[RMDB]
RNA sequence: GGGAACGACUCGAGUAGAGUCGAAAAGAAAUUGACGGAAGGGCACCACAAGGCGUAAACUUUUACCGCUAGCCGCAGUAACUCUGCGCCGAACAGCAGCCCGAAAGGGUGAUGUGGUGACCCUCUAAACAGUAAAUGCUAGUCCAGCACGGCUGGGGAUAGUUUGACUGUUCGCAGUCAAACUAUCAAAAGAAACAACAACAACAAC
Reactivity to 2A3 in 0.01 (KOAc 150mM, MgCl2 10mM, bicine 150mM(pH8.5), 24C), signal-to-noise 3, nucleotides 027 to 156: g040a010a100a020u100u100g030a010c060g010g030a080a020g030g000g000c010a000c000c000a000c030a010a020g010g020c020g030u050a090a140a090c060u100u100u070u050a030c040c020g000c040u080a050g060c050c060g000c030a010g000u030a010a010c020u010c000u100g010c000g000c000c010g030a090a040c040a020g060c000a000g010c000c000c000g010a030a010a000g010g000g010u060g050a090u070g010u010g030g000u010g080a230c000c010c000u000c000u010a040a030a000c040a010g030u140a020a060a030u110g030c070u050a050g070u020c010c010a000g010c060a050c160g190g000c000u000g000g000g000
Reactivity to DMS in 0.01 (KOAc 150mM, MgCl2 10mM, bicine 150mM(pH8.5), 24C), signal-to-noise 2, nucleotides 027 to 156: g040a090a180a160u000u000g010a150c160g000g050a020a050g000g000g010c000a050c000c000a040c010a120a190g020g000c000g080u010a020a050a050c100u010u020u010u010a040c010c000g000c000u000a210g030c260c220g000c000a040g000u000a020a000c100u010c050u000g010c000g000c010c020g000a090a080c120a040g000c130a270g010c010c010c000g000a050a100a150g010g000g030u020g010a120u010g010u000g020g020u000g010a020c010c020c010u020c020u010a040a060a110c040a110g000u000a100a100a150u010g000c010u000a100g000u000c000c030a100g020c020a110c020g040g040c000u000g000g030g000
Structure probing data (2A3 and DMS) for a 207-nucleotide construct. Conditions: 150 mM KOAc, 10 mM MgCl2 and 150 mM bicine (pH 8.5), 24 C. 2A3 adducts were read by reverse transcription with SuperScript II with manganese. Values cover nucleotides 27 to 156. For 2A3, 2,141 sequencing reads were counted.